[RMDB]
RNA sequence: GGGAACGACUCGAGUAGAGUCGAAAAGAUAUGGAUGUAGCGGCAAUACAAGUCCUUGUCGGAAACGACAAGGAGCUUGUGCCAGCUAGAUCCUAAGUCAAAAUCGUUUACCUUCGGGUAAACGAAAGGGUGAAUAUAGGUUCGCCUAUAUUCACCCAAAAGAAACAACAACAACAAC
Reactivity to DMS in 0.01 (KOAc 150mM, MgCl2 10mM, bicine 150mM(pH8.5), 24C), signal-to-noise 3, nucleotides 027 to 126: g000a020u010a290u000g000g000a010u000g000u000a000g020c010g010g000c010a210a110u020a300c010a020a010g000u000c010c010u000u000g020u000c000g020g000a050a070a140c000g010a010c000a020a010g010g000a010g020c010u000u010g010u010g000c000c000a080g010c000u000a000g000a000u000c000c000u010a040a070g000u010c020a130a080a130a160u000c000g000u000u000u000a000c000c000u000u010c240g010g010g000u000a000a000a000c000g000a010a030a100